The record gives the reactivity of an RNA of 177 nucleotides to DMS and 2A3. For 2A3 the reverse transcriptase was SuperScript II with manganese. It was measured as part of the RMDB library OK2TST. As a SHAPE reagent, 2A3 marks flexible, mostly unpaired nucleotides at the ribose 2'-OH. The RNA was probed in 150 mM KOAc, 10 mM MgCl2 and 150 mM bicine (pH 8.5) at 24 C. DMS adducts were read by reverse transcription with MarathonRT. For 2A3, 2,405 sequencing reads were counted.

RNA sequence: GGGAACGACUCGAGUAGAGUCGAAAAAUUCAGGCCAAAGCGGCACGCUCGCGUUCCUGCGCGAAGUCGAUUUCCGCAUCGUCGGCGAUCUCGGCUUCCUCGUUCACGAGCUGUCGGCGACGCUCGAAUACGAUGCGUCAUUCGUGACGCAUCGUAUAAAAGAAACAACAACAACAAC
Reactivity to DMS in 0.01 (KOAc 150mM, MgCl2 10mM, bicine 150mM(pH8.5), 24C), signal-to-noise 3, nucleotides 027 to 126: a130u000u010c050a110g010g000c000c030a040a180a270g000c020g000g000c060a010c230g020c000u000c030g000c030g020u010u010c030c060u010g020c060g020c300g010a020a000g020u000c010g000a030u000u010u000c070c010g000c040a170u010c260g020u000c080g000g000c030g030a000u000c080u000c030g020g000c010u000u000c000c010u010c060g020u000u010c020a080c000g000a010g010c040u000g020u000c010g030g010c020g000a300c300g000c010u010c040g000a090
Reactivity to 2A3 in 0.01 (KOAc 150mM, MgCl2 10mM, bicine 150mM(pH8.5), 24C), signal-to-noise 1, nucleotides 027 to 126: a010u120u060c030a020g080g000c030c030a070a080a030g170c000g020g000c000a000c080g000c000u000c010g010c000g020u040u060c010c080u110g070c010g010c080g010a000a000g040u010c010g010a020u020u000u010c090c020g000c030a140u080c090g300u030c060g030g000c060g010a020u000c020u020c010g000g000c000u020u000c020c010u030c020g040u060u040c020a010c070g010a010g010c020u020g040u000c000g100g200c030g000a000c020g010c030u050c040g020a030